[RMDB]
RNA sequence: GGGAACGACUCGAGUAGAGUCGAAAAGAAAAAGCGGAAGUGGCGAAAUCGGUAGACGCAGUUGAUCAUAGAUCAACCGUAGAAAUACGUGCUGGUUCGAGUCCAGCCUUCCGCACCGAAAAAAAAAGCAGGUAUAUAAGUUCGCUUAUAUACCUGCAAAAGAAACAACAACAACAAC
Reactivity to DMS in 0.01 (KOAc 150mM, MgCl2 10mM, bicine 150mM(pH8.5), 24C), signal-to-noise 2, nucleotides 027 to 126: g020a080a080a070a190a100g000c010g000g000a030a030g000u000g000g000c000g000a000a000a050u010c240g030g000u010a010g000a300c000g000c000a170g000u000u000g000a010u020c000a180u000a180g010a030u000c020a000a010c000c010g000u000a000g000a140a060a150u000a020c000g000u010g040c000u000g010g000u000u000c020g010a300g000u000c000c000a000g000c010c000u000u000c000c000g030c000a120c050c000g000a010a000a020a000a030a030a150a090a300
Reactivity to 2A3 in 0.01 (KOAc 150mM, MgCl2 10mM, bicine 150mM(pH8.5), 24C), signal-to-noise 1, nucleotides 027 to 126: g040a000a070a010a010a000g010c030g000g020a000a010g050u020g020g010c010g010a010a040a000u300c120g130g200u100a010g000a010c010g020c010a000g000u000u000g000a010u050c140a280u190a210g020a000u010c010a010a010c000c010g020u010a010g010a010a080a020u040a010c000g010u000g000c000u000g000g010u000u040c000g000a000g010u070c010c000a000g000c000c010u000u010c000c000g000c000a000c000c000g010a030a030a010a000a000a000a000a010a000